[RMDB]
RNA sequence: GGGAACGACUCGAGUAGAGUCGAAAACUUUCUAGGACUAUCCGGAAUACCUCGACGAUACUCCGAUUAUCCUGACGCAUACACAGCAUGAAAUACUAUUUCCUCAAUAGGCUCAUUCAUCUCACUAACAGCAGUGAUAUUAAUAAUCUUCAUUAUCGAAGAGUAGUUUCUUCGGAAACUACUCUUCAAAAGAAACAACAACAACAAC
Reactivity to 2A3 in 0.01 (KOAc 150mM, MgCl2 10mM, bicine 150mM(pH8.5), 24C), signal-to-noise 5, nucleotides 027 to 156: c020u070u040u020c030u140a180g000g030a090c050u050a100u090c020c020g020g010a030a010u030a080c000c020u020c010g030a040c020g010a050u020a030c010u020c060c040g040a040u060u030a030u090c000c020u020g060a040c040g020c030a020u100a130c050a010c000a050g030c020a040u100g050a040a080a020u130a030c040u030a070u040u050u060c020c010u050c030a030a060u030a100g040g000c030u030c050a020u060u040c020a060u010c010u010c020a010c030u080a230a040c030a060g100c020a010g020u010g050a030u020a040u120u030a050a080u070a070a050u040c010u060u020c070a120u000u140a110u150c050
Reactivity to DMS in 0.01 (KOAc 150mM, MgCl2 10mM, bicine 150mM(pH8.5), 24C), signal-to-noise 2, nucleotides 027 to 156: c090u010u000u000c030u010a070g060g020a160c090u000a060u000c080c020g000g020a010a020u000a040c090c040u000c090g040a180c180g000a190u000a000c000u000c030c020g000a040u000u000a100u000c000c000u000g020a090c140g000c070a110u000a120c030a120c030a130g020c020a100u010g000a070a100a120u010a060c030u000a100u010u010u000c030c040u000c070a070a120u010a090g010g000c040u000c040a030u000u000c030a090u000c020u000c010a050c020u000a110a100c050a110g030c090a060g030u000g020a130u000a120u000u020a050a100u000a050a050u000c040u000u010c050a100u000u000a100u020c110